[RMDB]
RNA sequence: GGGAACGACUCGAGUAGAGUCGAAAAGAUAUGGAUUCGUGUAAGCAAUGAUGACCCCCUUUAGCGUAACAUCAUUCGGAAACGAAUGUGGCUAAAGGGGGUUUGAGCUUUAUCCGAAUCCUAAGUCCUAAGAUCACAGCUUCGGCUGUGAUCUUAGAAAAGAAACAACAACAACAAC
Reactivity to DMS in 0.01 (KOAc 150mM, MgCl2 10mM, bicine 150mM(pH8.5), 24C), signal-to-noise 1, nucleotides 027 to 126: g020a130u010a300u010g000g000a020u020u000c010g010u010g010u000a020a010g000c000a110a210u010g000a220u000g000a030c000c000c000c000c000u000u000u000a000g000c000g020u000a040a110c190a040u020c020a000u020u000c000g010g040a110a130a240c000g000a000a000u000g020u000g010g000c000u010a010a000a040g010g010g020g000g000u000u000u020g000a100g020c010u000u010u000a120u000c140c010g000a010a000u000c000c000u000a070a040g000u000c000